[RMDB]
RNA sequence: GGGAACGACUCGAGUAGAGUCGAAAAUAUUGCUAACCAGGAGAUUGCUAAGGCGGUGCAGAAGCGCUUAGAGUCUAGGCCGACCGUUCAAAUAGAGGAUCCAGAUUUAAUGUCAACAGCCGAAGAACUUGUUUGAGAGGUUCGCCUCUCAAACAAGAAAAGAAACAACAACAACAAC
Reactivity to DMS in 0.01 (KOAc 150mM, MgCl2 10mM, bicine 150mM(pH8.5), 24C), signal-to-noise 1, nucleotides 027 to 126: u060a040u000u000g000c010u000a120a090c070c030a090g020g000a080g000a080u010u020g040c010u010a040a120g000g030c020g020g010u010g010c090a090g000a090a080g000c090g020c020u000u010a040g000a100g000u000c020u000a150g010g000c080c020g000a050c090c060g010u000u010c090a060a070a070u010a100g010a120g000g000a060u000c020c040a040g000a060u000u000u000a040a060u010g000u010c030a010a150c120a060g040c050c030g040a070a080g020a070a080
Structure probing data (DMS) for a 177-nucleotide construct. It was measured as part of the RMDB library OK2TST. DMS adducts were read by reverse transcription with MarathonRT. Conditions: 150 mM KOAc, 10 mM MgCl2 and 150 mM bicine (pH 8.5), 24 C. Values cover nucleotides 27 to 126.